RNA sequence: GGGAACGACUCGAGUAGAGUCGAAAAGAUAUGGAGCUUCUACCCACCAAGCCCACGUGGAACUACUGGGAACUGGUCGGAAACGACCAUAGUACCAGCCACGUGGGCUUGAGGAAGCUCCUAAGUCCAUGAUCACUCUGUUCGCAGAGUGAUCAUGAAAAGAAACAACAACAACAAC
Reactivity to DMS in 0.01 (KOAc 150mM, MgCl2 10mM, bicine 150mM(pH8.5), 24C), signal-to-noise 1, nucleotides 027 to 126: g000a190u010a090u020g000g020a030g000c000u000u000c020u000a140c000c030c020a300c120c010a000a000g010c000c010c000a000c030g030u000g000g040a020a080c040u010a300c070u000g050g000g010a090a120c250u000g000g000u020c030g010g010a050a080a210c000g000a030c010c000a020u010a010g000u000a130c000c010a000g000c000c000a000c020g030u020g000g010g000c020u000u000g010a060g020g000a030a000g000c000u000c040c000u000a000a050g010u030c030